[RMDB]
RNA sequence: GGGAACGACUCGAGUAGAGUCGAAAAGUCGCCUCGCCCGAGAGGACGACGAACACCUCCUCCUGAUCCGGGUGGGCGUGAGCCGCACCGCUGAACCGCUCGCCCGGCUCGAGGGCGUACUGGACGAGGUCGACCACUAUUUCGAUAGUGGUCGACCAAAAGAAACAACAACAACAAC
Reactivity to DMS in 0.01 (KOAc 150mM, MgCl2 10mM, bicine 150mM(pH8.5), 24C), signal-to-noise 1, nucleotides 027 to 126: g000u020c020g000c010c000u000c010g020c050c010c060g020a170g000a050g010g030a090c070g010a070c080g020a150a080c160a170c060c060u000c050c000u010c000c040u010g010a090u000c000c010g010g000g060u000g010g000g000c010g000u000g040a020g000c020c090g010c100a080c160c070g000c000u010g000a090a250c300c000g010c010u000c000g010c000c000c000g000g020c010u000c080g010a040g010g000g000c070g040u000a130c080u000g020g030a100c110g010a080